[RMDB]
Chemical mapping of a 177-nucleotide RNA with 2A3 and DMS.
RNA sequence: GGGAACGACUCGAGUAGAGUCGAAAAUGAAACCUGUGUGAGCGAGGCGGGCGGAGGAUGAGGCCGUGCCCGGGCUCUGGCUGCAGCCGCCCGGGGACACGCCGUGCACCCUCGGGCUCCGGAAAAAUUACUUGAUUAGAUUCGUCUAAUCAAGUAAAAAAGAAACAACAACAACAAC
Reactivity to 2A3 in 0.01 (KOAc 150mM, MgCl2 10mM, bicine 150mM(pH8.5), 24C), signal-to-noise 2, nucleotides 027 to 126: u160g030a040a050a040c000c020u030g030u020g030u060g130a060g040c060g020a040g030g050c030g020g010g030c030g030g030a040g050g010a040u070g010a040g060g010c160c020g010u010g040c000c000c000g000g000g010c060u090c110u080g050g000c080u220g050c060a040g020c010c020g000c000c000c010g010g020g000g000a030c010a010c020g040c010c000g000u060g000c010a040c000c000c000u000c030g020g110g000c020u000c020c040g060g020a090a090a000a010a000
Reactivity to DMS in 0.01 (KOAc 150mM, MgCl2 10mM, bicine 150mM(pH8.5), 24C), signal-to-noise 8, nucleotides 027 to 126: u010g000a110a100a130c030c020u000g010u010g020u000g010a080g010c060g010a080g010g010c060g010g010g010c030g010g010a030g000g010a050u000g000a140g010g010c050c080g020u000g000c010c000c000g010g000g000c020u010c140u010g010g010c060u010g020c230a120g010c040c080g010c010c000c000g010g000g000g000a040c020a040c110g000c020c020g010u010g010c030a040c040c010c000u000c020g010g030g010c020u000c010c020g010g000a020a040a060a090a100

For 2A3 the reverse transcriptase was SuperScript II with manganese.
The reactions ran in a buffer of 150 mM KOAc, 10 mM MgCl2 and 150 mM bicine (pH 8.5), at 24 C.
For DMS, 15,432 sequencing reads were counted.